[RMDB]
RNA sequence: GGGAACGACUCGAGUAGAGUCGAAAACGAUCGUACAAGAUCAAGAUAGUCAGGAACUUGCAGAUCAACUUGUUAAAAAUAACUUUAGAGCAACAAAAUUGGCAACAACAGGUGGGUUUUUAAGAGCUACAUGACAAAGAUUCGUCUUUGUCAUGUAAAAAGAAACAACAACAACAAC
Reactivity to DMS in 0.01 (KOAc 150mM, MgCl2 10mM, bicine 150mM(pH8.5), 24C), signal-to-noise 6, nucleotides 027 to 126: c140g020a030u010c020g000u020a170c160a090a090g000a050u000c020a130a140g020a110u020a070g000u020c080a050g000g010a050a080c040u010u010g000c070a090g010a030u010c030a050a080c090u000u010g000u030u010a030a060a060a070a080u030a040a100c140u010u040u020a100g010a130g000c070a050a080c080a040a030a080a090u020u020g000g010c060a040a050c110a020a030c080a030g000g020u010g000g000g000u010u000u010u000u020a030a050g000a070g010c130
Reactivity to 2A3 in 0.01 (KOAc 150mM, MgCl2 10mM, bicine 150mM(pH8.5), 24C), signal-to-noise 9, nucleotides 027 to 126: c080g000a010u040c020g050u140a060c070a170a060g010a020u020c010a000a030g110a130u160a030g080u130c080a030g080g040a060a050c010u020u040g010c030a020g000a080u040c010a020a050c040u050u070g050u090u080a060a110a040a080a120u100a040a040c020u110u130u140a080g010a010g100c040a040a060c050a050a150a080a120u130u130g070g000c010a050a020c010a020a020c010a090g070g000u060g010g040g000u000u020u000u040u110a100a070g030a010g040c020